[RMDB]
RNA sequence: GGGAACGACUCGAGUAGAGUCGAAAAUAUGCACCUGCCACCGCUUUUCGUCAAGAAACAGAAACCGCAACAGGGUGUCGCAGUAAUAAUCUUUCAGAAAGCGGGCAGUUUUAUGCCUGAUAUUACACAUGUAGUUUAACUUCGGUUAAACUACAUGAAAAGAAACAACAACAACAAC
Reactivity to DMS in 0.01 (KOAc 150mM, MgCl2 10mM, bicine 150mM(pH8.5), 24C), signal-to-noise 5, nucleotides 027 to 126: u010a050u010g020c110a100c260c010u000g010c030c060a120c130c030g020c030u000u000u000u000c040g020u010c170a050a100g000a060a060a080c110a100g000a110a070a040c030c040g030c020a040a050c050a170g020g010g020u010g010u000c070g000c040a050g000u000a030a060u000a060a190u000c020u000u010u000c090a100g000a040a030a070g010c010g010g010g010c000a010g000u000u010u010u020a060u000g010c010c060u010g010a080u000a050u000u000a080c150a200
Reactivity to 2A3 in 0.01 (KOAc 150mM, MgCl2 10mM, bicine 150mM(pH8.5), 24C), signal-to-noise 3, nucleotides 027 to 126: u170a070u060g030c010a020c000c010u000g030c020c010a130c070c020g000c030u060u040u070u050c020g020u060c040a040a060g010a050a090a000c040a050g080a090a070a030c030c000g000c040a090a060c010a120g110g050g120u060g040u040c040g000c070a000g020u010a010a020u030a030a050u050c020u040u040u030c020a050g030a060a060a010g020c000g040g010g000c000a000g000u090u080u050u100a040u080g030c010c000u030g040a040u040a050u140u160a070c090a010